RNA sequence: GGGAACGACUCGAGUAGAGUCGAAAACACACACACAGCGUAUGCGGCGAUGUUCACGAAUGUCUGCAGCAUGUUCAUCUUUGAAGAUGCUUCAACGAAACUACGGUUAUCACACACUCUCACUUAUUUAUAUUGGAUGUGUUGAGAGCUUCAGAACCAUACGACCAUGUUUCGACAUGGUCGUAUGAAAAGAAACAACAACAACAAC
Reactivity to DMS in 0.01 (KOAc 150mM, MgCl2 10mM, bicine 150mM(pH8.5), 24C), signal-to-noise 3, nucleotides 027 to 156: c060a080c040a060c080a080c060a110c070a120g000c140g010u010a070u000g020c030g020g030c050g010a030u000g010u000u000c040a080c100g010a110a080u000g010u000c020u000g020c060a110g000c020a020u010g010u000u010c030a100u000c200u010u010u000g020a030a030g000a010u010g000c030u000u000c010a080a130c030g000a130a070a070c060u000a080c030g020g000u010u000a110u000c020a080c070a040c060a030c030u000c010u000c030a040c050u010u000a080u010u000u000a070u000a140u070u020g000g010a060u000g010u000g000u010u010g010a050g020a050g030c010u000u000c050a150g000a090a140c240
Reactivity to 2A3 in 0.01 (KOAc 150mM, MgCl2 10mM, bicine 150mM(pH8.5), 24C), signal-to-noise 9, nucleotides 027 to 156: c040a000c010a000c000a000c000a010c020a030g020c030g050u130a050u150g030c050g030g010c050g070a080u090g040u090u090c070a050c110g100a110a060u140g020u050c060u060g010c010a010g010c000a000u030g120u030u020c040a110u050c160u170u140u140g030a030a010g030a040u020g010c000u040u060c040a100a070c040g080a120a060a030c060u100a040c070g040g000u040u040a080u120c000a010c000a010c000a010c060u020c010u020c010a020c060u100u050a100u200u250u030a200u050a100u090u120g070g010a070u040g030u010g020u130u100g020a060g000a010g020c020u090u080c030a040g020a040a020c040

The record gives the reactivity of an RNA of 207 nucleotides to DMS and 2A3. The data come from the RNA Mapping Database (RMDB), library OK3TST. For 2A3, 7,149 sequencing reads were counted. The DMS profile rests on 6,488 reads. The reactions ran in a buffer of 150 mM KOAc, 10 mM MgCl2 and 150 mM bicine (pH 8.5), at 24 C.